An RNA of 177 nucleotides, treated with DMS and 2A3 and read out base by base. For 2A3, 3,654 sequencing reads were counted. The data come from the RNA Mapping Database (RMDB), library OK1LIB. Values cover nucleotides 27 to 126. The DMS profile rests on 4,804 reads. The reactions ran in a buffer of 150 mM KOAc, 10 mM MgCl2 and 150 mM bicine (pH 8.5), at 24 C.

[RMDB]
RNA sequence: GGGAACGACUCGAGUAGAGUCGAAAAGAAAGCGCGAGUCGUAUGACCGGCCAAAUGCGACGAGUCCUUGAUGCUGAAAGGCCGGUAAGCAUCUUGGACGAGGCUGCGAAGCAGUCGAGCGCGAAAAGGGAAAUACCAAGUUCGCUUGGUAUUUCCCAAAAGAAACAACAACAACAAC
Reactivity to DMS in 0.01 (KOAc 150mM, MgCl2 10mM, bicine 150mM(pH8.5), 24C), signal-to-noise 2, nucleotides 027 to 126: g000a150a080a150g060c010g000c010g000a210g050u000c000g030u020a040u060g000a080c010c000g000g010c010c000a100a090a110u010g010c000g040a010c000g000a030g000u000c000c000u000u020g010a010u000g010c020u000g000a030a030a130g000g000c000c000g000g030u000a030a010g060c030a000u000c000u020u000g020g000a040c010g010a120g000g010c000u000g000c000g030a080a060g020c010a000g030u000c010g010a110g010c010g000c000g000a060a050a090a090
Reactivity to 2A3 in 0.01 (KOAc 150mM, MgCl2 10mM, bicine 150mM(pH8.5), 24C), signal-to-noise 3, nucleotides 027 to 126: g060a000a020a000g020c010g000c010g000a040g020u020c010g000u070a070u130g070a040c000c010g000g000c000c010a080a070a000u210g010c010g000a010c040g020a020g020u000c000c000u000u010g010a020u040g000c000u080g090a120a050a030g040g000c000c000g000g000u010a030a000g000c000a000u010c000u010u010g010g000a010c000g000a010g000g020c000u000g000c040g130a110a010g060c000a010g010u010c020g070a010g090c000g000c000g010a080a020a010a000